An RNA of 207 nucleotides, treated with DMS and 2A3 and read out base by base. Reactivities are given for positions 27 through 156.

RNA sequence: GGGAACGACUCGAGUAGAGUCGAAAACGGGGUUGGCUAUAGUUGAUUUCGAACCGUAUGCUUAUGUAUAUGGAAUGAUUUGUACGCUUUACGCAUGUGUACACUCACUCUCAGUUCACUCUUGUGAGAGAAGGGAGAGAGAGAUAUUUUGCGAUUAGGAUACUGGGAUCUUCGGAUUCUGGUAUUCAAAAGAAACAACAACAACAAC
Reactivity to DMS in 0.01 (KOAc 150mM, MgCl2 10mM, bicine 150mM(pH8.5), 24C), signal-to-noise 2, nucleotides 027 to 156: c060g000g020g020g000u010u000g010g000c030u000a060u000a110g010u000u010g000a120u000u000u000c030g000a080a270c010c020g030u000a020u000g010c020u010u000a110u020g040u000a050u000a040u000g010g000a110a130u010g000a110u000u000u000g020u000a070c090g010c040u000u000u000a160c090g020c040a030u000g010u000g000u000a030c030a110c070u000c000a220c010u000c000u000c030a070g020u000u000c050a090c030u000c030u000u020g010u020g020a060g020a060g000a050a120g000g000g000a040g000a040g020a060g020a030g000a100u000a020u000u000u010u010g020c020g000a190u010u000a160
Reactivity to 2A3 in 0.01 (KOAc 150mM, MgCl2 10mM, bicine 150mM(pH8.5), 24C), signal-to-noise 2, nucleotides 027 to 156: c020g010g000g000g000u020u010g030g000c030u040a020u010a090g010u010u000g020a150u040u030u040c020g010a040a010c020c000g010u000a010u010g000c020u160u120a040u210g020u010a010u000a000u020g020g000a040a060u040g030a040u040u000u070g000u000a000c020g000c000u000u010u070a010c010g010c000a010u020g000u010g000u010a000c000a010c010u010c000a020c000u010c000u000c010a050g030u000u040c020a020c030u020c040u080u170g030u130g060a020g010a000g020a030a020g110g000g000a020g000a000g000a000g000a000g000a020u000a050u060u090u040u070g000c020g040a030u020u070a040
For DMS, 4,337 sequencing reads were counted. The reactions ran in a buffer of 150 mM KOAc, 10 mM MgCl2 and 150 mM bicine (pH 8.5), at 24 C.